[RMDB]
RNA sequence: GGGAACGACUCGAGUAGAGUCGAAAACAGGGAAUUACAUUGCAAAAUGGGAGGGUAUCUGCAGUCCUGACAAAGUCACCAUCCUGGAUGAGUAUCAAAGACUUACAACAUACCCUGAAGGUGUACAAGUGGUGUUUGGGGACCCAACCCAGAGUUGAAUUACCUAACACUUCGGUGUUAGGUAAUUAAAAGAAACAACAACAACAAC
Reactivity to 2A3 in 0.01 (KOAc 150mM, MgCl2 10mM, bicine 150mM(pH8.5), 24C), signal-to-noise 2, nucleotides 027 to 156: c050a000g000g010g070a070a030u110u040a090c080a100u170u140g080c100a050a060a050a270u120g010g030g010a050g030g000g020u040a010u040c040u080g020c020a000g050u020c000c020u010g020a050c040a020a110a000g040u020c000a000c040c000a030u070c030c060u010g000g030a050u020g000a080g030u030a020u130c090a000a190a020g040a120c060u060u070a020c070a050a040c000a040u080a100c000c010c000u010g050a010a020g010g000u100g020u080a060c080a150a030g000u020g080g020u020g090u050u040u080g020g000g010g040a020c010c010c050a040a090c010c020c020a080g030a030g080u080u230g010
Reactivity to DMS in 0.01 (KOAc 150mM, MgCl2 10mM, bicine 150mM(pH8.5), 24C), signal-to-noise 2, nucleotides 027 to 156: c040a080g010g020g020a110a130u020u010a100c050a080u000u000g020c080a060a080a090a070u000g010g010g010a150g010g010g010u000a060u000c030u000g000c050a060g000u000c020c020u010g010a050c020a060a070a230g020u000c060a030c050c010a110u010c110c080u000g070g010a120u010g000a100g020u000a090u010c040a060a060a100g000a100c030u000u000a090c040a030a060c060a050u000a020c020c000c010u010g000a140a070g030g040u010g000u000a060c060a050a150g000u000g000g010u000g010u000u000u010g020g020g000g020a120c030c050c070a040a110c030c000c010a140g010a090g020u000u010g000
Structure probing data (2A3 and DMS) for a 207-nucleotide construct. The RNA was probed in 150 mM KOAc, 10 mM MgCl2 and 150 mM bicine (pH 8.5) at 24 C. Reactivities are given for positions 27 through 156. For 2A3, 832 sequencing reads were counted. For DMS, 3,624 sequencing reads were counted. DMS adducts were read by reverse transcription with MarathonRT.